[RMDB]
RNA sequence: GGGAACGACUCGAGUAGAGUCGAAAACUGGACGGCUUCGAAGGGCAUCUCGACGCUGAGGGUCAUCGAGGCGCAACGGGCUGGCGGGCGGUGGGACUGCCGUGGAGACAGGGAUGACCGACGAGUCUCAACGCUGUUGGUUCGCCAACAGCGUUGAAAAAGAAACAACAACAACAAC
Reactivity to DMS in 0.01 (KOAc 150mM, MgCl2 10mM, bicine 150mM(pH8.5), 24C), signal-to-noise 1, nucleotides 027 to 126: c020u000g010g000a100c300g020g000c000u050u000c010g000a040a210g000g010g020c010a100u030c010u000c030g000a200c130g040c090u030g010a120g020g000g020u000c030a070u000c040g010a040g000g020c020g000c020a090a120c110g000g000g020c090u000g000g000c070g000g000g000c020g000g000u020g000g000g050a060c000u030g000c090c100g000u000g000g030a120g030a060c150a110g040g000g000a070u030g060a070c000c000g050a090c120g010a050g010u000c000
Reactivity to 2A3 in 0.01 (KOAc 150mM, MgCl2 10mM, bicine 150mM(pH8.5), 24C), signal-to-noise 3, nucleotides 027 to 126: c000u020g010g110a050c060g030g050c030u090u060c090g050a100a080g010g010g020c010a130u020c020u060c060g120a150c020g070c120u100g030a030g070g010g040u050c020a020u090c020g030a040g000g000c020g000c050a010a140c080g060g040g000c040u030g060g010c060g030g000g030c040g060g010u110g030g040g000a020c060u050g000c020c010g040u040g000g030a080g010a070c080a040g050g020g000a070u060g000a050c000c000g010a000c010g020a010g090u020c000
An RNA of 177 nucleotides, treated with DMS and 2A3 and read out base by base. Source: RMDB library OK1LIB, as collected in RNAgym. The RNA was probed in 150 mM KOAc, 10 mM MgCl2 and 150 mM bicine (pH 8.5) at 24 C.